[RMDB]
RNA sequence: GGGAACGACUCGAGUAGAGUCGAAAACUGUGGCCACCAGGAGCCUGCCGUCCGCCCUGUGGUAUGUCCUGCAGCUCUCGACACCUCACAACCUCCAGCGGGCCUUGCCCACCCCAUGGGAAGGGGCUGCAUUAUGCCCCUUCGGGGGCAUAAUGCAAAAAGAAACAACAACAACAAC
Reactivity to DMS in 0.01 (KOAc 150mM, MgCl2 10mM, bicine 150mM(pH8.5), 24C), signal-to-noise 1, nucleotides 027 to 126: c040u010g000u020g010g010c030c040a060c040c060a120g030g000a100g010c080c060u000g000c060c050g020u010c050c090g020c040c040c010u010g010u000g000g010u000a040u000g000u000c030c050u000g030c060a080g020c030u000c000u000c020g000a130c080a090c020c020u000c050a040c110a070a160c080c030u000c040c020a060g020c100g000g010g000c030c030u010u030g010c010c000c030a150c040c010c010c060a100u000g000g000g010a060a080g010g010g010g000c100